Chemical mapping of a 207-nucleotide RNA with 2A3 and DMS. 2A3 adducts were read by reverse transcription with SuperScript II with manganese. High 2A3 reactivity points to a flexible backbone, as in loops and unpaired stretches. DMS adducts were read by reverse transcription with MarathonRT. Source: RMDB library OK3TST, as collected in RNAgym.
[RMDB]
RNA sequence: GGGAACGACUCGAGUAGAGUCGAAAAUGAGGGAUAAAGAACGCGAUCUCCAGUCCACUUACGAUCUAACUGGCGCAAUGCAUAGGAUUGUAUUGACUGUUACGGAUCUUCAUGAUGCAGCUGAAUUAUUUGGGCUGGCAAAGCUUUCUGGCCAUCCUCAAUAAGCCAUAUUCGUAUGGCUUAUUGAAAAAGAAACAACAACAACAAC
Reactivity to 2A3 in 0.01 (KOAc 150mM, MgCl2 10mM, bicine 150mM(pH8.5), 24C), signal-to-noise 3, nucleotides 027 to 156: u170g020a060g020g040g020a050u070a120a160a010g010a020a010c030g010c010g040a090u030c040u000c070c000a010g000u000c000c010a020c020u050u070a050c070g040a020u010c010u040a030a070c060u090g120g000c130g020c140a030a050u070g000c020a030u080a160g200g160a230u180u040g010u020a010u010u040g050a060c040u060g030u060u060a050c090g060g010a020u000c000u090u070c080a080u130g100a120u130g140c050a070g040c060u070g070a160a070u200u050a050u050u120u040g010g000g000c000u000g000g000c020a030a020a000g000c000u010u020u010c010u010g010g000c010c020a030u030c010c010
Reactivity to DMS in 0.01 (KOAc 150mM, MgCl2 10mM, bicine 150mM(pH8.5), 24C), signal-to-noise 5, nucleotides 027 to 156: u000g010a080g020g020g000a120u000a100a120a050g010a030a030c060g010c020g020a080u010c060u030c050c010a020g010u000c000c020a060c130u000u000a060c070g020a030u010c010u000a040a110c100u010g030g010c050g030c040a090a060u010g020c020a090u000a210g020g010a100u000u000g010u000a040u000u000g020a150c080u010g010u000u000a090c060g020g010a040u000c020u000u010c070a080u000g010a100u010g000c040a070g020c030u000g010a060a070u000u000a090u000u000u000g020g020g000c020u000g010g010c130a020a120a110g000c020u000u000u000c020u010g010g010c060c070a120u000c030c020